[RMDB]
The record gives the reactivity of an RNA of 177 nucleotides to 2A3 and DMS.
The DMS profile rests on 4,613 reads.
RNA sequence: GGGAACGACUCGAGUAGAGUCGAAAAGAUGAAGUGAGAAGAGACUGUAAGAACGGCUAACUGAGCAGACAGAUACAGACGGCAAGUAUCGUCGCCAGAGAUACAGUCGCAAAUAGCCGGAGGAAGAGAUCAGGGAUGGAUUCGUCCAUCCCUGAUCAAAAGAAACAACAACAACAAC
Reactivity to 2A3 in 0.01 (KOAc 150mM, MgCl2 10mM, bicine 150mM(pH8.5), 24C), signal-to-noise 4, nucleotides 027 to 126: g110a020u200g060a020a020g130u090g080a100g060a130a010g030a040g000a060c000u010g000u050a060a040g060a250a030c000g000g040c050u020a060a030c010u060g000a010g060c080a120g010a000c030a100g000a000u010a020c010a010g240a060c040g070g050c060a180a000g000u000a000u000c000g000u000c000g000c010c000a000g000a000g000a020u040a030c030a020g020u000c000g010c040a060a090a030u090a010g010c010c000g020g010a030g020g060a040a080g040a030
Reactivity to DMS in 0.01 (KOAc 150mM, MgCl2 10mM, bicine 150mM(pH8.5), 24C), signal-to-noise 3, nucleotides 027 to 126: g000a110u020g000a070a030g010u000g010a080g010a160a020g020a140g000a020c010u000g000u010a060a140g000a100a120c000g000g000c060u010a160a200c000u000g020a140g030c000a100g030a020c000a100g010a010u010a000c030a110g020a150c190g010g000c060a150a080g010u000a000u000c010g000u000c000g000c000c010a000g000a070g020a060u010a010c050a020g000u010c010g000c150a040a080a080u020a050g010c000c000g000g000a120g020g000a080a070g000a120
For 2A3, 3,637 sequencing reads were counted. For DMS the reverse transcriptase was MarathonRT. Conditions: 150 mM KOAc, 10 mM MgCl2 and 150 mM bicine (pH 8.5), 24 C.